[RMDB]
RNA sequence: GGGAACGACUCGAGUAGAGUCGAAAAUAACUUCAGCAAAACACCGAGCUCCAUCAGCUUUUAACUGAGCAAAGGCUGGAAAUUUGAUAUUCUUAUUAAUGCCUUUUUCAUCAUAAGAACUUGCGAGCUCUACUAGAGUGUUCGCACUCUAGUAGAGAAAAGAAACAACAACAACAAC
Reactivity to 2A3 in 0.01 (KOAc 150mM, MgCl2 10mM, bicine 150mM(pH8.5), 24C), signal-to-noise 2, nucleotides 027 to 126: u050a030a000c030u070u050c020a020g020c010a020a090a030a050c040a040c050c030g030a020g010c000u020c060c000a080u050c020a010g000c020u040u070u030u100a040a060c070u050g040a010g010c050a020a020a010g000g010c020u000g030g130a030a070a060u140u100u050g040a010u050a080u300u090c020u040u080a120u030u100a150a060u070g000c000c000u020u020u010u070u060c050a110u000c010a010u060a170a020g030a050a030c030u050u060g030c040g070a010g020
Reactivity to DMS in 0.01 (KOAc 150mM, MgCl2 10mM, bicine 150mM(pH8.5), 24C), signal-to-noise 3, nucleotides 027 to 126: u020a090a090c060u000u000c060a070g040c060a080a060a110a060c090a070c070c060g010a070g010c020u000c030c080a060u010c090a050g010c030u000u000u010u030a090a120c150u000g000a030g030c120a050a020a030g000g020c000u010g000g000a050a070a060u010u000u000g010a140u000a070u000u000c020u000u000a060u000u000a120a100u000g010c050c020u000u000u000u010u010c030a050u000c090a080u010a040a050g000a060a040c110u000u000g010c060g020a100g020
Structure probing data (2A3 and DMS) for a 177-nucleotide construct. DMS adducts were read by reverse transcription with MarathonRT. For DMS, 1,952 sequencing reads were counted. High 2A3 reactivity points to a flexible backbone, as in loops and unpaired stretches.